[RMDB]
RNA sequence: GGGAACGACUCGAGUAGAGUCGAAAAUUUAUGGUCGCUUUAUUUUGACAUCUGUUGGCGAUUGUGCUUUUCUUGGACCAUAUGAGGAUGUUGCCAGUAGGUUGUCUGCAACGCAGACAGCAAUUAAGUUAAAAUUGACUUUCGAGUCAAUUUUAACAAAAGAAACAACAACAACAAC
Reactivity to 2A3 in 0.01 (KOAc 150mM, MgCl2 10mM, bicine 150mM(pH8.5), 24C), signal-to-noise 1, nucleotides 027 to 126: u050u040u000a070u050g080g030u020c020g000c160u230u240u120a090u050u280u280u200g080a050c050a020u020c040u130g080u090u040g050g000c030g000a030u050u130g000u060g100c060u000u010u040u050c040u090u080g040g020a010c030c020a020u000a150u220g040a040g150g030a020u070g040u000u040g070c000c020a030g010u030a080g090g040u000u000g000u010c000u000g030c000a110a090c090g010c050a000g000a010c000a000g010c000a000a140u090u140a100a000
Reactivity to DMS in 0.01 (KOAc 150mM, MgCl2 10mM, bicine 150mM(pH8.5), 24C), signal-to-noise 3, nucleotides 027 to 126: u000u000u010a060u010g000g020u000c020g030c110u020u010u010a020u010u000u020u000g020a080c090a070u010c080u010g010u000u000g010g010c090g020a040u000u010g020u000g010c120u010u010u020u010c050u010u010g020g010a070c020c030a080u010a040u000g020a080g000g020a100u000g000u000u010g000c040c030a130g020u000a100g020g020u000u000g010u000c000u000g010c010a080a160c240g010c000a000g000a020c000a010g010c020a060a060u010u010a070a170
The record gives the reactivity of an RNA of 177 nucleotides to 2A3 and DMS. The DMS profile rests on 3,364 reads. Source: RMDB library OK2TST, as collected in RNAgym. High 2A3 reactivity points to a flexible backbone, as in loops and unpaired stretches. The 2A3 profile rests on 737 reads.